RNA sequence: GGGAACGACUCGAGUAGAGUCGAAAAAUCGACUAGACGUUUAUUCUCAAAUAGCGAUUGGUGUUGUAAGGAUCCUGGUCGCAGUAAGUUAACCAACAUGGUGAAUUCUUGCACACUAUUAACGAUAAGUUACGCGUCAAUUCGUUGACGCGUAACUAAAAGAAACAACAACAACAAC
Reactivity to 2A3 in 0.01 (KOAc 150mM, MgCl2 10mM, bicine 150mM(pH8.5), 24C), signal-to-noise 2, nucleotides 027 to 126: a000u120c030g040a030c040u150a110g020a270c020g050u000u000u000a130u200u000c070u000c000a030a030a060u070a040g000c020g040a020u000u090g000g000u000g000u000u280g000u000a050a010g010g010a000u020c000c030u050g000g000u080c100g030c020a020g130u250a300a000g030u020u190a000a100c000c020a010a210c050a300u140g200g000u070g120a020a070u000u000c000u000u000g030c000a000c000a000c000u050a020u160u090a020a040c010g000a020u000a300